Structure probing data (DMS) for a 177-nucleotide construct. For DMS the reverse transcriptase was MarathonRT. For DMS, 1,395 sequencing reads were counted. The reactions ran in a buffer of 150 mM KOAc, 10 mM MgCl2 and 150 mM bicine (pH 8.5), at 24 C. It was measured as part of the RMDB library OK2TRN.
RNA sequence: GGGAACGACUCGAGUAGAGUCGAAAAAUUUCUAUCUGGUCUCGGAACGAGUUUGGAGGCCCUCUCAGAGUGUGUCAACAACAAAGUCGGGGUGCAUCUCUUUGGAGUGAUCAUGGGCGUUGCGGGAAUCGCAGUUUAGUUUCGACUAAACUGCGAUAAAAGAAACAACAACAACAAC
Reactivity to DMS in 0.01 (KOAc 150mM, MgCl2 10mM, bicine 150mM(pH8.5), 24C), signal-to-noise 2, nucleotides 027 to 126: a200u010u010u000c020u000a090u010c080u000g020g020u000c040u000c050g010g010a090a100c080g000a090g000u000u000u010g000g020a180g030g010c010c000c020u000c020u000c130a140g030a110g020u000g000u000g010u000c030a030a090c080a050a110c100a040a080a110g020u000c050g010g000g000g030u000g010c040a030u000c040u010c020u000u000u000g020g020a070g030u000g000a080u000c060a070u000g000g010g010c050g010u000u010g000c040g000g000g000a130